[RMDB]
Source: RMDB library OK1LIB, as collected in RNAgym.
Chemical mapping of a 177-nucleotide RNA with DMS and 2A3.
For DMS, 1,922 sequencing reads were counted.
Conditions: 150 mM KOAc, 10 mM MgCl2 and 150 mM bicine (pH 8.5), 24 C.
2A3 is a SHAPE reagent: it acylates the 2'-hydroxyl of flexible nucleotides of all four kinds.

RNA sequence: GGGAACGACUCGAGUAGAGUCGAAAAUCGUGGCAUCACCUGCGCCGCGCAGGUAUCCGCGGGCCAGGUGCACCGCGACCAGCGAGGACGAUUGGCCACAAUCGACGGUCAUGCUGGGACCGUGCAGGGCACGCCAUAAUUUCGAUUAUGGCGUGCCAAAAGAAACAACAACAACAAC
Reactivity to DMS in 0.01 (KOAc 150mM, MgCl2 10mM, bicine 150mM(pH8.5), 24C), signal-to-noise 1, nucleotides 027 to 126: u000c000g010u000g000g040c080a150u040c050a020c000c000u010g000c110g000c010c000g050c020g020c120a060g020g050u040a080u000c180c020g040c000g040g020g020c000c000a030g000g010u000g000c300a300c000c000g000c000g010a050c070c020a030g000c000g000a060g010g080a090c020g000a020u000u030g000g000c000c110a120c000a070a060u000c000g000a110c030g030g000u000c010a010u110g000c000u000g000g000g030a050c020c000g000u000g050c050a120g040
Reactivity to 2A3 in 0.01 (KOAc 150mM, MgCl2 10mM, bicine 150mM(pH8.5), 24C), signal-to-noise 4, nucleotides 027 to 126: u020c010g000u000g000g010c040a110u110c000a100c000c000u010g010c090g000c140c000g290c000g000c040a090g150g040u180a130u140c090c060g000c000g000g000g040c010c010a020g030g000u030g040c030a030c020c000g000c000g030a010c000c000a030g000c030g110a160g070g100a060c040g030a070u030u080g090g020c070c010a120c030a070a050u030c040g080a020c000g020g030u020c020a050u080g000c010u050g040g000g000a000c010c000g010u020g060c030a080g020